[RMDB]
RNA sequence: GGGAACGACUCGAGUAGAGUCGAAAAGUCAGAUAUGGACCUUGAACUACAGCUGGACAACUCCAACAGCGUCUCUCGGAAACGAGAGACGACAUGGAGGGGACAGCUGCAAGGUCCUAAGUCAUAAUCAAUGUCAAAAGUUCGCUUUUGACAUUGAAAAAGAAACAACAACAACAAC
Reactivity to DMS in 0.01 (KOAc 150mM, MgCl2 10mM, bicine 150mM(pH8.5), 24C), signal-to-noise 6, nucleotides 027 to 126: g010u010c140a090g010a080u010a300u010g000g000a020c000c000u010u010g010a110a070c120u010a300c020a010g010c000u010g010g000a160c010a050a130c000u010c010c000a030a130c300a200g000c010g000u000c010u000c000u000c000g010g000a090a090a230c000g010a010g010a010g010a010c000g010a020c090a120u010g020g000a020g020g000g010g010a080c000a000g010c000u000g000c010a010a000g000g020u000c000c000u000a000a090g010u000c030a110u010a090a150
Reactivity to 2A3 in 0.01 (KOAc 150mM, MgCl2 10mM, bicine 150mM(pH8.5), 24C), signal-to-noise 3, nucleotides 027 to 126: g140u090c070a050g000a140u110a090u180g000g000a010c000c000u040u000g020a090a050c090u200a110c300a010g000c000u030g050g110a130c030a210a180c080u010c000c000a130a100c060a200g080c000g000u000c000u000c010u010c000g010g030a080a090a070c010g010a000g000a000g000a010c000g000a000c000a060u080g000g020a000g010g000g010g010a010c000a000g000c000u010g000c000a010a010g070g000u000c010c000u010a000a000g000u000c010a030u260a210a110